Record summary
The data come from the RNA Mapping Database (RMDB), library M2RFPK. The record gives the reactivity of an RNA of 207 nucleotides to 2A3 and DMS. The RNA was probed in 150 mM KOAc, 10 mM MgCl2 and 150 mM bicine (pH 8.5) at 24 C. For 2A3, 7,551 sequencing reads were counted.
[RMDB]
RNA sequence: GGGAACGACUCGAGUAGAGUCGAAAAACAGCGAAAGGCACAAGACUUCGAACAUUAUAGCAGUUAGUAGUUGCCUAAACCCAUUGCAAUAGAUGGGACAGUAGAGGUCGCAAGCCUAUACUGUGCGAAAAGUCGCAAGGUUUCGACCUUGCGACAAUCUACUUGAAAGAUUCGUCUUUCAAGUAGAAAAAGAAACAACAACAACAAC
Reactivity to 2A3 in 0.01 (KOAc 150mM, MgCl2 10mM, bicine 150mM(pH8.5), 24C), signal-to-noise 7, nucleotides 027 to 156: a000c040a010g030c020g070a180a100a030g020g010c010a020c030a050a080g060a030c020u050u030c070g070a100a050c050a180u180u210a150u210a150g050c070a030g020u030u110a020g040u060a010g010u100u060g010c000c000u030a070a040a040c000c000c000a000u000u040g000c050a070a060u030a130g100a040u010g010g000g000a000c000a000g000u000a000g000a000g030g010u110c040g020c150a050a020g010c000c010u000a000u010a000c000u000g000u020g020c010g060a070a010a040a050g000u000c000g010c000a000a000g030g010u020u070u170c170g090a050c000c000u000u000g000c000g000a000c000a000a000
Reactivity to DMS in 0.01 (KOAc 150mM, MgCl2 10mM, bicine 150mM(pH8.5), 24C), signal-to-noise 4, nucleotides 027 to 156: a050c080a060g040c030g000a100a070a090g010g020c040a090c080a160a170g010a040c020u010u000c010g010a090a080c060a120u000u000a110u000a110g010c050a060g020u000u000a110g010u000a090g010u000u000g000c020c030u030a050a060a160c000c000c000a020u000u000g000c060a170a150u010a280g000a010u010g000g000g000a050c030a030g010u000a030g010a020g030g050u000c050g020c300a070a300g000c000c010u000a040u000a010c000u010g010u000g000c030g000a060a050a050a130g010u000c000g010c000a010a000g030g010u000u000u000c280g000a040c000c000u000u000g000c000g000a000c000a020a020